[RMDB]
RNA sequence: GGGAACGACUCGAGUAGAGUCGAAAAUAAAUGGCCAGCCAACUAACAUGGAUUGGAGGAAGGGAGUGGUGGUCAAGAAACAAAGAAGAUGACAGAAUUAAGUCCUCCUGGAAGACCUGAUAGUGGUUCUGUUUAAUUUUACAUUUUAACACGGAUACACCAGUCCUAUAUUCGUAUAGGACUGGUGAAAAGAAACAACAACAACAAC
Reactivity to 2A3 in 0.01 (KOAc 150mM, MgCl2 10mM, bicine 150mM(pH8.5), 24C), signal-to-noise 2, nucleotides 027 to 156: u090a000a030a050u010g030g000c010c010a050g090c040c000a060a060c050u070a040a040c030a090u180g010g010a100u050u140g060g060a060g030g010a050a080g030g030g010a080g010u020g010g000u030g000g000u050c020a030a010g110a010a080a000c140a070a080a060g060a040a000g080a040u070g000a020c010a020g050a140a040u040u010a120a000g020u000c000c020u040c000c000u000g080g000a040a020g000a030c030c020u060g070a070u010a070g020u010g020g000u040u010c000u000g010u070u010u050a040a070u040u160u080u110a080c120a090u050u080u090u210a060a010c060a000c060g040g020a050u030a120
Reactivity to DMS in 0.01 (KOAc 150mM, MgCl2 10mM, bicine 150mM(pH8.5), 24C), signal-to-noise 2, nucleotides 027 to 156: u010a060a080a090u000g000g040c060c030a160g010c000c050a130a090c060u020a100a110c060a220u000g020g010a140u010u020g060g000a130g040g000a130a190g020g030g010a130g060u000g000g000u000g030g000u000c050a050a070g000a060a090a080c100a050a030a180g010a050a020g000a120u000g010a100c030a100g000a060a090u000u000a070a100g000u000c000c000u000c010c070u020g080g000a130a080g010a040c040c010u000g020a090u000a060g020u000g040g010u000u000c000u000g030u000u000u010a050a100u000u010u010u000a080c060a090u020u030u010u000a040a210c060a120c090g020g010a200u000a120